[RMDB]
RNA sequence: GGGAACGACUCGAGUAGAGUCGAAAAUUGCAAGGUUCCAGCUUUAACUAUGGUUUCGGCGCACAUAGCGACCUUGAAUGGAUUGAAGCGGCGGCGGAUGUGGUGAAGCACGCCAAAAUCGCGACGAAUUUUAAUCCCCGUUCGCGGGGAUUAAAAUAAAAGAAACAACAACAACAAC
Reactivity to DMS in 0.01 (KOAc 150mM, MgCl2 10mM, bicine 150mM(pH8.5), 24C), signal-to-noise 1, nucleotides 027 to 126: u000u000g010c110a080a130g000g030u010u020c060c070a120g020c030u010u010u000a130a130c060u000a040u030g000g000u000u010u000c070g000g030c030g000c050a050c060a040u010a090g000c070g010a110c010c020u000u000g000a070a050u000g010g010a170u030u000g000a070a110g000c110g010g000c030g000g010c170g030g000a070u000g020u000g010g000u000g000a140a210g030c080a050c060g030c010c050a010a070a070a110u000c080g050c030g000a130c110g020a040